Structure probing data (2A3 and DMS) for a 177-nucleotide construct. The reactions ran in a buffer of 150 mM KOAc, 10 mM MgCl2 and 150 mM bicine (pH 8.5), at 24 C. The data come from the RNA Mapping Database (RMDB), library TTRDES. For 2A3, 45,900 sequencing reads were counted. For 2A3 the reverse transcriptase was SuperScript II with manganese.
RNA sequence: GGGAACGACUCGAGUAGAGUCGAAAAGAUAUGGAGAUAUUGUUAGGACAACAGCAUGGAUCGGAAACGAUCCAUGACAUGUCCGACACUGUAUCUCCUAAGUCAAAAGUACCGGUUCGCCGGUACAGUACAGUAUUUUGUUCGCAAAAUACUGUACAAAAGAAACAACAACAACAAC
Reactivity to 2A3 in 0.01 (KOAc 150mM, MgCl2 10mM, bicine 150mM(pH8.5), 24C), signal-to-noise 7, nucleotides 027 to 126: g040a030u090a050u210g010g000a010g000a000u000a000u040u040g030u030u030a060g010g010a010c020a220a040c050a190g080c000a010u000g010g000a000u000c000g030g010a060a070a040c010g000a000u000c020c010a000u000g010a010c000a020u050g000u000c000c010g000a000c000a000c020u020g000u010a000u000c000u000c000c000u010a080a000g050u010c030a050a020a020a210g000u000a010c010c030g010g030u080u080c300g050c060c000g000g000u000a000c000a000
Reactivity to DMS in 0.01 (KOAc 150mM, MgCl2 10mM, bicine 150mM(pH8.5), 24C), signal-to-noise 9, nucleotides 027 to 126: g000a040u000a300u010g000g010a010g020a010u000a000u000u000g010u000u010a300g010g000a020c000a020a110c230a190g010c010a000u000g000g010a010u000c000g000g000a100a130a230c010g010a000u000c000c000a000u000g000a010c090a150u000g000u000c000c000g000a160c300a020c180u000g000u000a010u000c000u000c000c000u000a030a090g010u000c030a080a110a140a200g010u000a000c010c010g000g000u000u020c300g030c010c000g000g010u000a000c010a090